Chemical mapping of a 207-nucleotide RNA with 2A3 and DMS. The DMS profile rests on 2,248 reads.
RNA sequence: GGGAACGACUCGAGUAGAGUCGAAAACGUCCCCGUCGUACAGAAUGGUAACAUAUCUCUCCAUAUAUCUGAGCUUGGGUAUACGGGGAAACCCAACCCCUUGGGAAGAUUGGGUAUAUGGCUAAAUUACAUCGAUUGUACUUCGGUACAAUCGAAACGACAUGUUAAUGUUCGCAUUAACAUGUCGAAAAGAAACAACAACAACAAC
Reactivity to 2A3 in 0.01 (KOAc 150mM, MgCl2 10mM, bicine 150mM(pH8.5), 24C), signal-to-noise 5, nucleotides 027 to 156: c040g120u060c010c000c000c000g110u110c040g040u100a100c060a130g090a180a120u130g070g010u160a190a040c050a080u170a140u060c090u000c010u000c050c010a010u010a000u010a020u040c010u010g010a010g050c030u040u050g030g000g000u020a030u010a050c010g000g000g000g000a050a020a000c010c000c010a010a040c000c010c010c000u040u080g070g030g040a070a040g050a100u060u060g010g000g000u010a000u000a000u010g020g010c050u130a120a140a070u190u150a060c060a110u030c000g000a000u010u000g000u000a010c000u010u050c150g070g000u000a000c000a000a000u000c000g000a010a000a000
Reactivity to DMS in 0.01 (KOAc 150mM, MgCl2 10mM, bicine 150mM(pH8.5), 24C), signal-to-noise 1, nucleotides 027 to 156: c020g000u010c000c000c000c090g020u010c100g010u000a190c080a090g020a090a080u000g000g000u000a090a140c080a080u000a070u020c070u000c030u010c000c000a020u010a020u010a020u010c020u000g010a070g000c120u000u000g010g000g000u000a130u000a050c040g010g010g010g000a080a090a200c020c000c010a090a090c060c000c000c060u040u090g040g010g000a150a050g020a120u000u000g010g000g060u010a020u000a000u020g010g040c050u010a080a030a080u000u010a060c080a140u000c000g000a000u000u000g010u010a000c000u010u000c300g090g020u000a010c000a010a000u000c000g000a000a020a130